[RMDB]
RNA sequence: GGGAACGACUCGAGUAGAGUCGAAAAUUGAGUCAACUGGGCUCUGCUAACACAAAGAUUGCAGCAUUAACCGCCGAUUAUGAUGCAUUAAAGGCGCUGCACGCAAAAUGCUCGAUCGAUAUCGCGGCCUUAGGGGCAACUAUCACGACAUUGAAUGCAUACGACGCAUGUUCGCAUGCGUCGUAUGAAAAGAAACAACAACAACAAC
Reactivity to 2A3 in 0.01 (KOAc 150mM, MgCl2 10mM, bicine 150mM(pH8.5), 24C), signal-to-noise 3, nucleotides 027 to 156: u080u040g000a000g010u030c050a110a090c210u130g030g010g020c020u060c050u070g000c020u110a100a040c080a000c030a220a090a020g020a050u060u040g020c030a000g020c000a010u100u080a040a040c020c050g010c000c010g060a010u010u070a070u150g170a110u210g000c070a030u060u110a000a050a090g010g010c030g010c020u130g040c050a030c030g070c030a150a090a030a000u020g010c010u000c010g040a060u010c030g030a000u040a010u090c070g020c010g060g060c010c010u070u130a100g120g000g000g030c000a030a070c020u030a050u070c020a010c110g070a040c000a040u040u080g090a050a030u110g030
Reactivity to DMS in 0.01 (KOAc 150mM, MgCl2 10mM, bicine 150mM(pH8.5), 24C), signal-to-noise 1, nucleotides 027 to 156: u010u010g010a080g030u030c040a090a110c140u010g040g000g000c000u010c040u000g010c070u000a110a110c050a060c060a080a130a120g040a090u010u000g030c070a060g070c040a070u000u000a050a100c020c040g040c030c000g000a140u020u000a130u010g030a140u010g050c110a020u020u010a060a120a140g000g040c020g070c030u000g020c000a240c030g020c060a110a080a040a140u000g000c020u000c000g000a100u000c040g040a120u000a030u000c130g000c040g000g010c010c080u000u000a080g050g010g040g040c040a040a080c060u010a070u000c040a040c020g000a020c020a110u000u020g000a120a130u000g000